[RMDB]
Structure probing data (2A3 and DMS) for a 177-nucleotide construct. The DMS profile rests on 7,144 reads. Source: RMDB library OK1LIB, as collected in RNAgym.
RNA sequence: GGGAACGACUCGAGUAGAGUCGAAAAUCGGCCGGCCGGCCUAGAACCUUUAGCCGAGAAGUUAGCGUAUCAAUCGGAAAUUAGAUUCUAUAUGGUUACGUGCGAUAGAUUACGCGCGAAGUAACAAGGGUAAUAUAAACUUCGGUUUAUAUUACCCAAAAGAAACAACAACAACAAC
Reactivity to 2A3 in 0.01 (KOAc 150mM, MgCl2 10mM, bicine 150mM(pH8.5), 24C), signal-to-noise 3, nucleotides 027 to 126: u050c000g060g040c020c010g030g020c010c100g010g020c000c000u000a000g030a010a010c000c000u030u040u120a060g060c030c010g030a010g050a170a000g090u140u170a070g030c050g070u130a080u130c050a070a070u050c000g010g060a040a060a040u170u130a040g030a080u070u010c030u020a080u030a040u200g100g000u020u050a040c010g020u030g030c010g020a030u130a070g170a170u100u270a030c030g010c000g000c030g020a030a040g110u040a020a010c040a030a100
Reactivity to DMS in 0.01 (KOAc 150mM, MgCl2 10mM, bicine 150mM(pH8.5), 24C), signal-to-noise 4, nucleotides 027 to 126: u020c050g000g010c000c030g000g010c090c070g030g000c070c090u000a010g000a070a080c040c020u000u020u010a070g030c000c010g010a060g010a130a120g010u050u000a140g010c120g030u010a040u020c080a080a210u010c050g000g000a050a050a100u020u020a040g010a130u000u000c020u020a070u010a080u040g000g020u000u010a080c020g000u020g000c030g010a070u020a090g000a090u020u030a060c060g020c030g000c070g020a040a110g010u020a030a060c080a070a110